[RMDB]
Chemical mapping of a 207-nucleotide RNA with DMS and 2A3. The 2A3 profile rests on 3,157 reads. DMS adducts were read by reverse transcription with MarathonRT. The data come from the RNA Mapping Database (RMDB), library PDB130. The reactions ran in a buffer of 150 mM KOAc, 10 mM MgCl2 and 150 mM bicine (pH 8.5), at 24 C. Values cover nucleotides 27 to 156.

RNA sequence: GGGAACGACUCGAGUAGAGUCGAAAAAGAGCACGUGCCGGGUAGCCACGCCACACGGGGUAAGAGCUGAACGCAUCUAAGCUCGAAACCCACUUGGAAAAGAGACACCGCCGAGGUCCCGCGUACAAGACGCGGUCGAUAGACUCGGGGUGUGCGCCUAAUGAACGAAGUUCGCUUCGUUCAUUAGAAAAGAAACAACAACAACAAC
Reactivity to DMS in 0.01 (KOAc 150mM, MgCl2 10mM, bicine 150mM(pH8.5), 24C), signal-to-noise 3, nucleotides 027 to 156: a110g000a120g020c040a060c080g020u000g040c020c020g030g010g020u000a100g030c030c030a060c050g040c020c030a060c100a140c060g000g030g010g000u000a050a250g010a060g030c000u000g010a140a160c110g010c100a030u020c070u000a160a070g010c010u010c000g000a050a070a300c060c000c010a090c120u000u010g020g010a120a060a060a140g000a270g010a110c010a020c020c000g010c030c020g000a020g020g000u000c090c000c010g010c030g030u000a170c100a130a140g000a110c010g020c010g010g000u010c060g020a180u010a100g010a130c000u000c000g000g010g000g000u010g010u010g000c060g040c060
Reactivity to 2A3 in 0.01 (KOAc 150mM, MgCl2 10mM, bicine 150mM(pH8.5), 24C), signal-to-noise 4, nucleotides 027 to 156: a000g040a000g000c030a020c060g010u030g060c090c040g020g000g020u050a040g040c040c010a050c060g050c030c000a070c010a020c080g040g000g000g000u030a040a030g010a010g030c000u020g030a090a030c070g010c120a020u020c050u110a040a050g000c010u010c010g010a110a050a030c000c010c000a020c020u050u090g060g020a050a090a080a060g080a030g010a010c000a000c010c020g300c010c000g000a010g010g010u010c010c010c000g000c000g000u050a130c090a150a080g130a040c000g000c000g000g030u040c050g020a010u030a150g160a070c000u000c000g030g000g000g000u000g000u010g040c040g040c010